[RMDB]
Conditions: 150 mM KOAc, 10 mM MgCl2 and 150 mM bicine (pH 8.5), 24 C. This 177-nucleotide RNA was probed chemically with 2A3 and DMS. DMS adducts were read by reverse transcription with MarathonRT.
RNA sequence: GGGAACGACUCGAGUAGAGUCGAAAAUGAUAAAGCCUUGGUAUUUCUUUUGCUAUUUCAAUACAGGGUCAGCCGGGCAUCCCAUGAUGGCUACAAAACCGACCUGUGUGACAAGGCCAUAAAAACCCUGGUCCAUUUGAUUCGUCAAAUGGACCAGAAAAGAAACAACAACAACAAC
Reactivity to 2A3 in 0.01 (KOAc 150mM, MgCl2 10mM, bicine 150mM(pH8.5), 24C), signal-to-noise 2, nucleotides 027 to 126: u100g070a050u070a130a090a040g030c010c000u020u050g040g000u170a170u050u190u100c080u050u170u060u130g090c120u260a180u130u190u160c130a100a010u070a030c010a040g060g000g000u070c040a010g000c000c000g040g000g000c020a070u060c000c000c090a000u130g060a010u000g000g050c040u010a030c120a040a210a060a000c010c000g000a060c030c040u060g030u040g020u060g130a000c000a050a030g010g010c000c020a030u210a040a040a000a040a060c010c010
Reactivity to DMS in 0.01 (KOAc 150mM, MgCl2 10mM, bicine 150mM(pH8.5), 24C), signal-to-noise 1, nucleotides 027 to 126: u010g010a060u040a050a120a240g000c000c000u020u050g010g000u010a090u010u000u000c040u000u000u020u010g020c140u000a060u000u060u050c100a070a130u010a070c010a140g000g000g050u000c120a060g000c020c050g040g000g000c080a030u000c020c000c000a080u000g000a060u070g000g070c010u030a030c050a150a040a060a140c050c090g000a110c050c110u000g010u000g000u000g000a130c020a020a040g040g000c000c060a010u040a080a110a000a120a040c170c000